The record gives the reactivity of an RNA of 207 nucleotides to DMS and 2A3.
2A3 adducts were read by reverse transcription with SuperScript II with manganese.
RNA sequence: GGGAACGACUCGAGUAGAGUCGAAAAUUUUAGUCGAUGGGGAUGGGAUCGACCCACCUUUAAACAAAACUUCACAUUUUUUGCGAGGUUGGACAUUUCUAGAGACUCCGAAAGGAUGUACAGGAGAGGUGAGUGUUCUAAAAGUAUGUAUAGAUCGAACUGAUUUAAACUUCGGUUUAAAUCAGUUAAAAGAAACAACAACAACAAC
Reactivity to DMS in 0.01 (KOAc 150mM, MgCl2 10mM, bicine 150mM(pH8.5), 24C), signal-to-noise 2, nucleotides 027 to 156: u010u000u000u000a080g030u000c040g040a150u000g020g000g010g010a100u010g020g000g010a120u000c080g020a120c000c020c010a100c030c000u010u000u010a080a090a170c060a100a100a050a040c030u010u000c010a040c010a030u030u000u010u000u010u000g030c000g020a020g000g030u010u010g000g010a140c080a140u000u000u010c050u000a110g010a240g010a070c040u010c000c030g010a100a080a080g010g000a070u010g000u010a090c030a110g020g000a080g020a090g020g030u010g000a110g040u000g010u000u000c040u000a050a050a050a090g010u010a050u000g020u000a150u010a100g010a110u010c050g000
Reactivity to 2A3 in 0.01 (KOAc 150mM, MgCl2 10mM, bicine 150mM(pH8.5), 24C), signal-to-noise 2, nucleotides 027 to 156: u050u040u010u110a010g010u010c060g000a000u040g000g020g020g000a010u040g000g010g040a070u090c020g050a110c000c010c010a020c010c010u060u070u050a170a110a010c090a030a050a000a000c030u150u190c100a050c020a160u060u100u050u060u110u200g020c010g020a000g010g010u020u010g030g010a040c050a060u150u200u040c010u040a050g000a030g020a130c020u020c010c030g010a050a000a000g040g000a030u070g020u090a090c080a080g000g040a020g010a000g010g010u040g030a030g010u030g010u090u010c030u040a110a080a030a010g040u030a100u150g020u010a060u100a070g030a050u070c070g000

The reactions ran in a buffer of 150 mM KOAc, 10 mM MgCl2 and 150 mM bicine (pH 8.5), at 24 C. DMS adducts were read by reverse transcription with MarathonRT. For DMS, 3,235 sequencing reads were counted. High DMS reactivity at an A or C suggests that its Watson-Crick edge is free.